The record gives the reactivity of an RNA of 177 nucleotides to DMS and 2A3. DMS adducts were read by reverse transcription with MarathonRT. The DMS profile rests on 2,886 reads. The RNA was probed in 150 mM KOAc, 10 mM MgCl2 and 150 mM bicine (pH 8.5) at 24 C. For 2A3, 1,924 sequencing reads were counted. Reactivities are given for positions 27 through 126.
[RMDB]
RNA sequence: GGGAACGACUCGAGUAGAGUCGAAAACAAUUGUAUUGUGAACUGCGAAGAGCUUUCCUUGGAUGAACUCGUUGCUAUUCUUACUGAGCCCACAAAUGCAAUUGUGAAGCAGUAUAUCGAGUUAUUCUCGUAUAUCCCCGUUCGCGGGGAUAUACGAAAAAGAAACAACAACAACAAC
Reactivity to DMS in 0.01 (KOAc 150mM, MgCl2 10mM, bicine 150mM(pH8.5), 24C), signal-to-noise 3, nucleotides 027 to 126: c000a010a010u000u000g020u000a060u000u000g010u010g010a060a060c100u000g000c020g030a030a050g010a030g020c090u000u010u000c040c090u010u020g050g000a150u010g020a020a070c030u000c030g030u000u010g010c030u000a090u000u000c070u010u010a120c230u010g010a070g010c160c090c020a030c010a010a050a050u010g010c020a010a030u000u000g010u010g000a130a170g000c030a080g010u010a050u010a090u010c020g010a030g010u000u000a110u000u000c010
Reactivity to 2A3 in 0.01 (KOAc 150mM, MgCl2 10mM, bicine 150mM(pH8.5), 24C), signal-to-noise 1, nucleotides 027 to 126: c010a000a000u070u020g020u060a040u020u020g010u010g050a080a060c070u030g010c030g040a090a060g000a060g050c000u050u080u060c030c050u080u230g170g040a150u090g050a060a030c010u010c030g040u030u020g020c020u050a090u180u100c020u020u040a130c130u090g070a030g000c000c050c000a000c020a010a130a000u060g000c000a020a030u020u010g010u010g020a020a000g060c020a000g110u080a050u010a030u150c000g010a000g000u010u010a050u040u000c030